[RMDB]
RNA sequence: GGGAACGACUCGAGUAGAGUCGAAAAAGCCACCGCUACGGCGGUGGCAAGUAGAAAAGUUGGUGCUUAGACCACGCCCUCUACAGUAAUAAUAGAUAAAUAGGCGAGUAUCAGUACGCUGAUACAAAAAACACUCACACGUUCGCGUGUGAGUGAACAGACAUGACUUCUUCGGAAGUCAUGUCUGAAAAGAAACAACAACAACAAC
Reactivity to 2A3 in 0.01 (KOAc 150mM, MgCl2 10mM, bicine 150mM(pH8.5), 24C), signal-to-noise 1, nucleotides 027 to 156: a000g000c000c000a000c000c000g020c050u020a000c300g080g000c000g010g000u020g010g000c000a000a000g010u000a020g000a010a050a000a000g090u060u060g010g010u050g050c110u200u130a050g060a090c000c000a000c000g030c000c000c000u020c010u000a000c030a030g130u050a040a140u040a100a120u120a060g120a080u060a090a080a050u070a060g060g000c070g060a040g010u000a000u020c000a010g030u070a040c250g000c160u000g000a000u000a010c000a040a130a030a000a000a030c000a020c000u010c040a000c000a000c000g030u160u190c240g030c020g220u020g010u000g000a000g000u000g000a000a000